[RMDB]
RNA sequence: GGGAACGACUCGAGUAGAGUCGAAAAGUGAUAUUUUUGACACUCCUAGCGUACUUCAAGCUACUCUUUCUGAGUUUUCACACUUAGCUACCUUUGCUGAGUUGGAAGCUGCGCAGAAAGCCUAUCACCUACAAACAUCCUUCGGGAUGUUUGUAGGAAAAGAAACAACAACAACAAC
Reactivity to DMS in 0.01 (KOAc 150mM, MgCl2 10mM, bicine 150mM(pH8.5), 24C), signal-to-noise 1, nucleotides 027 to 126: g010u000g020a240u000a100u000u000u000u000u000g010a040c110a080c050u000c020c040u010a060g000c000g010u000a050c030u010u020c100a110a140g010c120u020a010c080u000c010u000u000u000c020u020g020a020g000u000u010u000u000c010a010c170a020c010u000u000a000g000c000u000a120c300c170u000u030u000g010c000u000g030a000g010u000u000g010g010a030a000g040c040u010g010c250g010c040a010g020a000a020a060g020c250c010u000a050u000c080a120
Reactivity to 2A3 in 0.01 (KOAc 150mM, MgCl2 10mM, bicine 150mM(pH8.5), 24C), signal-to-noise 2, nucleotides 027 to 126: g020u020g040a080u040a170u160u110u080u070u100g060a010c010a010c020u000c000c030u010a030g000c030g020u040a090c020u090u130c040a090a080g010c040u040a080c010u010c000u020u000u000c020u020g010a020g020u000u010u000u010c030a040c010a000c060u020u000a000g020c010u070a110c020c100u140u140u120g000c000u000g000a000g000u010u030g000g000a000a000g000c010u060g030c060g020c040a000g010a000a000a000g020c000c000u110a130u100c050a030
Structure probing data (DMS and 2A3) for a 177-nucleotide construct. For 2A3 the reverse transcriptase was SuperScript II with manganese.